[RMDB]
RNA sequence: GGGAACGACUCGAGUAGAGUCGAAAAGCUUUCGUCUUCUCAGGCGCAGACGGCGUGUUAAAGGCAAGCACAUGCGGGAAGAUCAGCGCAUUCGCCGCACCAUGCGCGACAUGCCAGCGCGUGCCGAGGGGAUAGGCAAGCGCAUGGCCGCCGGCGGUGUUUGACCGUUUUUCGAAACGGUCAAACAAAAAGAAACAACAACAACAAC
Reactivity to 2A3 in 0.01 (KOAc 150mM, MgCl2 10mM, bicine 150mM(pH8.5), 24C), signal-to-noise 2, nucleotides 027 to 156: g000c000u060u040u100c050g080u000c000u060u000c030u010c040a050g090g020c070g000c030a030g030a150c080g050g020c000g040u070g040u090u200a160a140a060g060g030c030a030a000g030c040a050c010a090u100g030c000g000g030g020a090a050g010a090u050c050a010g070c010g000c050a070u050u040c000g010c030c020g000c000a000c020c000a020u000g000c010g000c020g060a060c050a110u090g010c010c000a080g010c030g010c040g120u110g040c060c020g010a060g020g030g010g010a050u070a130g050g020c020a020a060g000c010g000c000a020u020g030g100c150c070g050c080c000g020g000c020g010g020